The data come from the RNA Mapping Database (RMDB), library RNAMAK. Structure probing data (2A3) for a 207-nucleotide construct. The reactions ran in a buffer of 150 mM KOAc, 10 mM MgCl2 and 150 mM bicine (pH 8.5), at 24 C.

RNA sequence: GGGAACGACUCGAGUAGAGUCGAAAACAUCUAUUCGUAGAUGCUCAUCUCCUAAGUCGCAACGACGAUCCACCCAUGAGCUAUGAAGUGUCGGAAACGACAUGGAGCUCAUGGUGGAUUAGUUGCGAUAUGGACACCAGCACCUUUCGAGGUGCAAGGCAGGAAGUACUUUCGAGUACUUCCUGCCAAAAGAAACAACAACAACAAC
Reactivity to 2A3 in 0.01 (KOAc 150mM, MgCl2 10mM, bicine 150mM(pH8.5), 24C), signal-to-noise 2, nucleotides 027 to 156: c010a010u000c000u010a040u060u120c250g160u070a000g000a000u030g050c060u050c110a190u100c080u000c020c010u090a130a040g020u000c000g000c000a000a000c000g180a050c170g000a000u000c000c000a080c080c060c010a010u010g010a000g000c000u020a250u300g030a040a030g020u000g000u000c010g000g060a020a060a160c020g000a000c040a000u000g000g020a000g000c000u000c000a000u010g000g000u000g000g000a000u010u020a010g000u000u010g000c000g000a000u000a000u020g020g000a010c020a030c090c030a020g000c000a000c000c000u070u080u220c280g150a030g000g000u030g000c050a020a030